[RMDB]
RNA sequence: GGGAACGACUCGAGUAGAGUCGAAAACUGUCUGUUACAUGGAAGCGAUAAUCGGGAUAUUCACGAGCAACAUCCAUAUUGUCACUGUUUUUUAAUUUGAUUUUGUGCAUAUAUGUUACCUGACAGAGAUAGACCCCAUGUUCGCAUGGGGUCUAUCAAAAGAAACAACAACAACAAC
Reactivity to DMS in 0.01 (KOAc 150mM, MgCl2 10mM, bicine 150mM(pH8.5), 24C), signal-to-noise 1, nucleotides 027 to 126: c000u000g010u000c030u000g010u000u000a030c020a000u000g000g000a210a140g010c020g010a060u000a010a050u000c060g000g000g030a060u000a040u010u010c010a080c110g010a160g010c130a020a010c090a000u000c040c070a090u000a150u000u010g030u020c020a060c100u010g010u000u000u000u000u010u000a040a180u000u010u000g000a090u000u000u000u010g000u000g010c080a030u010a140u010a010u020g000u010u000a070c110c100u000g000a030c090a090g020a170
Reactivity to 2A3 in 0.01 (KOAc 150mM, MgCl2 10mM, bicine 150mM(pH8.5), 24C), signal-to-noise 2, nucleotides 027 to 126: c000u020g010u040c000u030g040u030u050a030c000a030u010g090g000a100a010g000c000g020a040u030a050a020u060c050g080g000g000a030u010a060u110u100c070a050c110g050a070g080c020a020a010c010a030u080c020c010a030u090a040u270u050g010u020c010a020c070u030g190u010u070u090u000u020u060a140a200u100u070u140g030a030u000u000u040u230g120u130g000c030a000u040a010u000a000u180g030u020u020a020c020c050u010g000a010c010a000g040a000